[RMDB]
RNA sequence: GGGAACGACUCGAGUAGAGUCGAAAAGAGUAAUGGGCGCGCAAGGUGAGAUGAAGCUGUAGUCUCACUGGAAGGACUAGAGGUUAGAGGAGACACGCCCAAAACAAGCAACAGCUUCAUCAAGAGAAGCGUAUAAUCCUUUCGAGGAUUAUACGCUAAAAGAAACAACAACAACAAC
Reactivity to DMS in 0.01 (KOAc 150mM, MgCl2 10mM, bicine 150mM(pH8.5), 24C), signal-to-noise 3, nucleotides 027 to 126: g000a070g010u000a050a120u000g000g050g010c030g010c150g020c080a090a200g030g010u020g010a110g010a010u010g000a020a010g010c000u000g000u000a170g010u000c000u010c010a120c030u000g000g000a050a110g010g000a050c050u000a090g030a120g010g000u010u010a050g000a090g000g000a070g000a080c080a150c050g040c010c020c030a010a020a090a050c200a090a130g000c100a210a080c030a010g020c000u000u000c000a020u010c020a050a150g000a130g020a050
Reactivity to 2A3 in 0.01 (KOAc 150mM, MgCl2 10mM, bicine 150mM(pH8.5), 24C), signal-to-noise 3, nucleotides 027 to 126: g080a000g020u190a070a110u050g000g070g000c060g000c000g010c050a030a060g110g020u080g080a080g000a000u000g010a010a010g010c000u020g000u040a040g010u040c020u000c000a100c040u030g040g010a030a010g060g070a010c050u050a070g020a020g200g090u140u070a050g000a050g080g020a010g020a000c020a020c030g020c020c010c000a000a030a000a000c050a010a010g100c030a000a030c000a000g000c000u010u020c020a080u010c030a030a000g080a010g020a130